RNA sequence: GGGAACGACUCGAGUAGAGUCGAAAAUAUGCCGCUGAUCCAGCCAUGCACAUUGCCUCCUCUAACGCUUUUCUUGAUUUGAGGACAUCAUGUUUUAGUGUCGCUGCACUUACAACUGGUUUGACUUAUGCAGCAGGCUUCGGCCUGCUGAAAAGAAACAACAACAACAAC
Reactivity to 2A3 in 0.01 (KOAc 150mM, MgCl2 10mM, bicine 150mM(pH8.5), 24C), signal-to-noise 4, nucleotides 027 to 129: u140a060u070g060c050c030g010c010u020g020a060u030c010c000a000g000c020c060a030u030g010c040a000c050a060u000u080g040c010c000u040c000c000u000c010u040a060a020c030g010c070u010u060u160u030c020u040u180g100a160u030u020u100g020a030g000g030a040c010a030u060c030a030u070g110u010u010u040u120a000g020u060g020u000c020g000c150u050g000c010a000c050u010u070a020c000a100a010c030u050g000g000u070u040u160g040a000c000u050u050a020u260g000
Reactivity to DMS in 0.01 (KOAc 150mM, MgCl2 10mM, bicine 150mM(pH8.5), 24C), signal-to-noise 3, nucleotides 027 to 129: u020a060u060g030c030c000g070c070u020g050a100u040c060c030a080g040c030c090a080u050g000c110a000c000a090u000u000g000c000c110u010c000c000u010c040u020a060a090c170g040c120u020u040u040u000c050u030u020g030a140u070u040u000g020a110g020g000a050c170a060u020c000a000u030g020u060u080u000u010a010g000u010g010u030c000g000c050u000g030c030a040c000u000u000a080c060a010a020c000u000g000g000u000u030u040g010a150c060u070u000a060u060g020